[RMDB]
RNA sequence: GGGAACGACUCGAGUAGAGUCGAAAACGUAACAGCUCACUGGUCGAGUGGACAUGCGCCGACAAUACACGGGGCUAAGCUCUGAACCGAAGCGGCGGGAUGAUUCAAAUCAUCGGUAGGGGAGCGUAUUUCCAAUAUGUUUCGACAUAUUGGAAAUAAAAGAAACAACAACAACAAC
Reactivity to DMS in 0.01 (KOAc 150mM, MgCl2 10mM, bicine 150mM(pH8.5), 24C), signal-to-noise 9, nucleotides 027 to 126: c060g010u040a080a090c110a140g020c010u000c020a070c050u000g010g010u000c040g020a030g020u000g000g000a060c100a080u020g010c020g010c010c000g000a070c090a070a100u020a110c240a130c030g010g000g000g010c030u020a100a140g010c030u000c020u000g000a100a060c100c080g020a110a110g010c050g000g000c030g010g000g010a010u000g000a080u000u010c150a070a090a110u010c060a040u000c020g010g010u010a120g000g000g000g010a050g000c040g010u010
Reactivity to 2A3 in 0.01 (KOAc 150mM, MgCl2 10mM, bicine 150mM(pH8.5), 24C), signal-to-noise 9, nucleotides 027 to 126: c040g050u080a090a020c010a060g010c010u010c020a050c040u060g020g060u080c020g020a030g030u050g010g030a030c030a070u090g000c050g030c010c010g070a110c080a080a070u150a110c070a020c060g010g010g020g000c040u050a070a030g010c010u000c020u050g070a090a040c020c030g030a080a010g020c020g030g000c000g020g030g040a010u030g020a030u050u100c080a120a120a160u080c050a030u010c020g010g030u080a050g020g030g010g000a010g010c010g020u020